[RMDB]
Chemical mapping of a 177-nucleotide RNA with 2A3 and DMS. DMS adducts were read by reverse transcription with MarathonRT.
RNA sequence: GGGAACGACUCGAGUAGAGUCGAAAAUCUCCGUGAUUCGUCACGGAGAAACAUAAAUAAAAUGGGUUCAACUCCCACGCUUUUCCGAGGGUAUCGGAAACCAACCUUCGCUCUUCGGAGCGAAGAACAUUAUAGUGGACUUCGGUCCACUAUAAUGAAAAGAAACAACAACAACAAC
Reactivity to 2A3 in 0.01 (KOAc 150mM, MgCl2 10mM, bicine 150mM(pH8.5), 24C), signal-to-noise 2, nucleotides 027 to 126: u000c000u000c000c000g000u010g010a020u020u110c200g030u010c150a000c010g000g010a020g010a010a000a000c010a010u290a090a110a020u200a090a120a030a080u100g020g000g000u060u100c020a020a010c040u030c020c010c020a050c050g110c020u120u140u040u050c000c000g010a010g050g140g080u190a100u040c010g010g000a020a000a000c020c010a020a050c010c000u010u010c000g000c010u010c010u020u090c250g110g010a000g000c000g000a010a000g000a000a000
Reactivity to DMS in 0.01 (KOAc 150mM, MgCl2 10mM, bicine 150mM(pH8.5), 24C), signal-to-noise 4, nucleotides 027 to 126: u000c000u000c000c010g030u000g010a010u010u010c160g020u000c000a000c000g000g010a000g000a000a030a060c110a100u010a050a100a120u000a040a050a080a120u020g010g010g000u010u010c170a110a300c110u000c000c000c010a050c200g020c100u000u010u000u000c010c000g000a040g000g000g000u010a050u020c000g000g000a010a040a060c220c070a070a070c110c000u000u000c000g010c000u000c000u000u010c180g000g000a010g010c000g010a000a000g000a060a090

2A3 adducts were read by reverse transcription with SuperScript II with manganese.